[RMDB]
RNA sequence: GGGAACGACUCGAGUAGAGUCGAAAACAGCGAAUACCUCCAGAGGAUCAUACGGCUGCUCGGGAACCUCGACAGGGACACCCGGGAACAGUGGGAAGGCCUUCCCGGCCUGGCUCAGGAGAUAAACCCGGGUGUAAGUAUUCGUACUUACACCCGGAAAAGAAACAACAACAACAAC
Reactivity to DMS in 0.01 (KOAc 150mM, MgCl2 10mM, bicine 150mM(pH8.5), 24C), signal-to-noise 1, nucleotides 027 to 126: c140a070g050c130g010a160a150u040a110c080c010u000c010c030a150g010a010g000g000a150u010c090a070u000a020c020g000g040c020u000g040c000u000c000g000g020g010a140a190c000c000u010c200g010a090c260a120g010g000g010a160c180a200c010c000c010g020g000g000a050a010c020a010g030u020g010g020g010a220a000g010g030c010c010u000u000c050c010c010g010g000c000c000u000g000g000c030u020c000a070g000g020a000g010a020u020a000a170a100c190
Reactivity to 2A3 in 0.01 (KOAc 150mM, MgCl2 10mM, bicine 150mM(pH8.5), 24C), signal-to-noise 1, nucleotides 027 to 126: c030a030g070c070g060a130a060u080a250c000c030u100c040c030a010g010a070g070g050a110u160c080a060u140a170c060g050g000c020u030g000c000u030c010g010g040g010a030a010c000c020u040c130g180a090c200a140g000g010g100a030c050a160c120c000c020g010g000g020a130a070c040a000g090u090g000g020g030a020a050g010g000c000c000u090u060c040c000c000g030g020c000c000u000g060g000c010u000c000a010g070g020a020g070a080u230a120a070a120c030
An RNA of 177 nucleotides, treated with DMS and 2A3 and read out base by base.
Conditions: 150 mM KOAc, 10 mM MgCl2 and 150 mM bicine (pH 8.5), 24 C.